[RMDB]
RNA sequence: GGGAACGACUCGAGUAGAGUCGAAAAAUGUGCGGCAAAGAAACAUUGUUUAUGCAAAGGCACUUCGCAAUGUGUGCUCAAACAUUGCUUACUCAAACACGCUUCACAAUGUGCGACAAAGAAACAUAAAACGUUUAGUACUUCGGUACUAAACGAACACGGCUACUAUCUUCGGAUAGUAGCCGUGAAAAGAAACAACAACAACAAC
Reactivity to 2A3 in 0.01 (KOAc 150mM, MgCl2 10mM, bicine 150mM(pH8.5), 24C), signal-to-noise 2, nucleotides 027 to 156: a000u100g050u040g090c030g030g010c060a040a080a080g070a040a070a000c020a010u060u050g050u030u060u090a080u090g030c040a050a050a030g150g000c000a010c000u070u060c020g030c030a010a010u030g010u010g000u020g050c020u040c190a040a050a000c000a030u000u000g020c000u070u050a050c020u020c040a000a050a040c050a030c070g020c010u040u050c020a010c000a070a020u060g000u060g060c040g040a020c060a030a060a000g090a020a120a000c040a030u160a050a130a000a020c000g000u000u010u000a000g020u000a000c000u000u090c260g060g000u030a000c000u000a000a000a000c000g000a000a000